The record gives the reactivity of an RNA of 177 nucleotides to 2A3 and DMS.
RNA sequence: GGGAACGACUCGAGUAGAGUCGAAAAUCGGUCUUCAAGCCUGUCAUACUGACUCGUCUUGAGCGAAAAUAAGUCUGUAACCCGCAAUGUGUGCGAAUUAUGGCAAAAGGCAACCGCAGGCUGCUUUCAAAUAUGUUGAGUUCGCUCAACAUAUUUGAAAAGAAACAACAACAACAAC
Reactivity to 2A3 in 0.01 (KOAc 150mM, MgCl2 10mM, bicine 150mM(pH8.5), 24C), signal-to-noise 2, nucleotides 027 to 126: u020c010g010g040u040c040u110u100c070a060a000g000c000c030u010g010u060c010a060u080a300c100u110g030a040c010u010c040g100u050c020u060u090g020a050g030c000g060a000a020a000a040u160a020a000g020u010c000u020g040u090a080a080c000c020c030g000c060a080a100u180g080u050g030u010g220c010g020a040a050u150u040a060u150g070g000c000a010a080a040a160g040g000c020a070a020c010c050g010c030a010g020g000c010u020g010c000u050u000u000
Reactivity to DMS in 0.01 (KOAc 150mM, MgCl2 10mM, bicine 150mM(pH8.5), 24C), signal-to-noise 1, nucleotides 027 to 126: u000c080g010g030u020c020u010u010c040a030a060g020c000c010u000g000u000c000a160u040a130c300u000g000a010c000u000c050g000u030c000u010u010g000a050g010c040g010a040a070a130a100u020a050a050g020u010c010u000g010u010a100a100c030c030c010g040c060a090a130u010g020u030g000u000g030c000g010a050a050u010u010a020u000g020g010c030a010a080a110a060g000g000c050a090a020c100c060g010c110a090g000g000c040u000g000c060u000u030u000
It was measured as part of the RMDB library RFMREP.